Structure probing data (2A3 and DMS) for a 177-nucleotide construct.
For 2A3 the reverse transcriptase was SuperScript II with manganese.
For DMS the reverse transcriptase was MarathonRT.
Reactivities are given for positions 27 through 126.
[RMDB]
RNA sequence: GGGAACGACUCGAGUAGAGUCGAAAAGAUAUGGAGGCAGCGCGAAACUCCGUGUCGGAAACGACAUUGGAGGAGCUGCUCCUAAGUCAAAGUUCUUUCUCAGCGGUUCGCCGCUGAGAAAGAACAACGUUUAGUUAGACUUCGGUCUAACUAAACGAAAAGAAACAACAACAACAAC
Reactivity to 2A3 in 0.01 (KOAc 150mM, MgCl2 10mM, bicine 150mM(pH8.5), 24C), signal-to-noise 3, nucleotides 027 to 126: g030a010u070a030u190g000g010a060g250g230c010a000g000c050g030c100g150a190a110a080c010u000c000c020g000u000g000u000c000g000g020a090a060a020c010g020a010c000a020u230u300g010g000a010g020g000a030g000c000u000g000c010u000c000c000u030a150a040g050u040c050a180a040a040g000u000u000c000u010u000u010c000u010c010a010g000c020g000g110u040u130c260g040c160c000g000c000u000g000a000g000a000a000a000g000a000a000c010a000a000
Reactivity to DMS in 0.01 (KOAc 150mM, MgCl2 10mM, bicine 150mM(pH8.5), 24C), signal-to-noise 3, nucleotides 027 to 126: g000a050u000a300u010g000g010a040g020g000c000a010g020c000g010c110g000a090a090a130c000u000c010c000g040u000g000u000c000g000g000a100a090a130c010g000a020c000a030u010u030g040g010a010g000g000a150g010c000u000g010c010u010c000c000u010a050a140g010u000c040a070a120a140g000u000u010c000u000u000u000c000u000c000a000g010c010g010g020u000u010c200g020c020c000g000c000u000g000a000g000a000a010a000g000a010a000c000a050a070